[RMDB]
RNA sequence: GGGAACGACUCGAGUAGAGUCGAAAAUGUGGCCCUGACCACCCAGCCUGGCCCCAGGAUGGAGCCCCGGCCCCCAGACACAUGGCACUGGGUGAGGCCGCCUCUCAGCACUUGUCCCAGGAAGUCAGAGCAGCUGCCAGAAGAGAGAGGAGCUGUGCAUCGGUAUACAGUUCGCUGUAUACCGAUGAAAAGAAACAACAACAACAAC
Reactivity to 2A3 in 0.01 (KOAc 150mM, MgCl2 10mM, bicine 150mM(pH8.5), 24C), signal-to-noise 1, nucleotides 027 to 156: u100g000u030g040g030c050c000c100u040g020a050c000c040a030c080c050c030a020g030c010c000u050g050g050c020c050c050c020a050g040g000a080u070g010g000a010g000c080c080c000c000g010g000c000c000c000c000c000a020g020a010c090a020c010a110u130g040g000c050a030c070u020g000g040g060u070g020a190g000g010c010c000g000c010c000u000c000u000c020a000g020c050a050c070u040u050g000u060c000c000c010a000g040g040a050a000g110u050c020a000g000a020g050c010a010g060c020u050g120c030c000a020g010a230a000g040a070g050a000g010a040g040g000a010g000c000u010g020u020g060
Reactivity to DMS in 0.01 (KOAc 150mM, MgCl2 10mM, bicine 150mM(pH8.5), 24C), signal-to-noise 1, nucleotides 027 to 156: u010g020u000g030g010c080c050c060u020g030a070c030c020a130c010c080c030a180g020c080c020u000g050g000c050c010c060c040a180g020g020a080u010g040g000a090g060c020c030c070c090g010g030c050c000c000c000c060a070g040a190c060a100c070a100u020g070g030c070a290c040u020g000g000g010u010g000a080g060g050c000c050g020c040c020u010c010u000c030a130g000c040a020c030u010u000g000u010c040c060c030a200g040g020a070a060g000u000c030a110g000a150g070c060a110g000c060u000g000c030c050a190g000a090a110g000a170g020a120g030a080g020g010a150g020c030u000g000u020g000

Structure probing data (2A3 and DMS) for a 207-nucleotide construct.
The DMS profile rests on 1,850 reads.
Conditions: 150 mM KOAc, 10 mM MgCl2 and 150 mM bicine (pH 8.5), 24 C.
The 2A3 profile rests on 1,105 reads.